The record gives the reactivity of an RNA of 177 nucleotides to DMS and 2A3.
Values cover nucleotides 27 to 126.
For DMS, 7,084 sequencing reads were counted.
The RNA was probed in 150 mM KOAc, 10 mM MgCl2 and 150 mM bicine (pH 8.5) at 24 C.
RNA sequence: GGGAACGACUCGAGUAGAGUCGAAAAAGGCAGCUUCCCGGCUUUUAAGCUACCGACGAUGCAAACGUAGCAGGCAUCGAAUUUUCGGCCCUUCGAAAAGCUGAGAUGAGCUCAGCAAGGGAAUCAAAUACAAGGAGGAAUUCGUUCCUCCUUGUAUAAAAGAAACAACAACAACAAC
Reactivity to DMS in 0.01 (KOAc 150mM, MgCl2 10mM, bicine 150mM(pH8.5), 24C), signal-to-noise 6, nucleotides 027 to 126: a040g000g010c020a040g010c080u000u000c010c010c010g020g020c060u000u010u000u010a050a090g010c050u000a080c020c010g010a150c040g010a030u000g000c030a040a080a160c140g020u000a060g020c100a150g000g000c010a010u000c020g010a100a100u000u000u010u000c020g010g000c040c090c010u000u000c100g000a070a060a070a110g010c000u000g000a030g010a300u010g010a150g020c010u000c010a010g010c020a040a030g000g000g000a080a080u010c130a070a090
Reactivity to 2A3 in 0.01 (KOAc 150mM, MgCl2 10mM, bicine 150mM(pH8.5), 24C), signal-to-noise 2, nucleotides 027 to 126: a000g020g000c000a000g000c030u030u020c000c000c030g050g000c010u000u080u010u170a040a020g000c010u030a020c010c000g040a020c030g030a030u030g010c030a010a190a140c070g070u110a070g010c050a040g090g090c010a030u000c020g040a190a130u190u050u040u050c000g040g000c020c000c010u070u040c040g040a070a090a040a050g010c010u000g000a000g000a060u190g080a040g110c020u000c000a000g000c050a030a010g020g000g030a060a040u230c060a140a120